[RMDB]
RNA sequence: GGGAACGACUCGAGUAGAGUCGAAAACGGGGUUGGCUAUAGUUGAUUUCGAACCGUAUGCUUAUGUAUAUGGAAUGAUUUGUACGCUUUACGCAUGUGUACACUCACUCUCAGUUCACUCUUGUGAGAGAAGGGAGAGAGAGAUAUUUUGCGAUUAGGUAUGUGUUAUGUUCGCAUGGUGCAUAUCAAAAGAAACAACAACAACAAC
Reactivity to 2A3 in 0.01 (KOAc 150mM, MgCl2 10mM, bicine 150mM(pH8.5), 24C), signal-to-noise 3, nucleotides 027 to 156: c030g000g010g010g000u050u040g030g000c020u000a020u060a110g020u020u050g060a190u030u030u050c020g020a050a040c010c000g010u010a000u020g010c010u160u140a080u260g020u000a010u010a010u030g030g010a060a040u070g020a070u060u040u060g010u000a000c010g010c020u040u080u060a020c030g010c020a030u030g010u000g000u000a010c010a010c020u020c000a020c000u000c000u000c000a090g040u060u030c010a010c030u040c000u100u240g030u170g080a010g000a000g000a030a030g050g020g000a000g000a000g000a000g000a000g010a010u020a070u080u200u100u060g020c020g030a050u020u090a030
Reactivity to DMS in 0.01 (KOAc 150mM, MgCl2 10mM, bicine 150mM(pH8.5), 24C), signal-to-noise 3, nucleotides 027 to 156: c080g040g020g040g020u010u000g000g030c060u000a100u000a110g020u000u010g000a160u000u000u000c030g010a050a180c010c020g010u000a030u010g020c030u010u010a110u010g040u010a040u000a070u010g010g020a080a120u000g010a070u000u010u010g010u000a040c090g000c030u000u010u000a160c060g030c050a050u010g010u000g020u000a030c020a130c050u000c000a180c010u000c000u000c020a080g010u010u000c030a100c030u000c030u000u000g000u000g010a080g010a060g030a080a120g000g000g010a040g000a060g000a060g010a060g010a070u000a020u000u000u000u000g020c000g010a210u000u010a120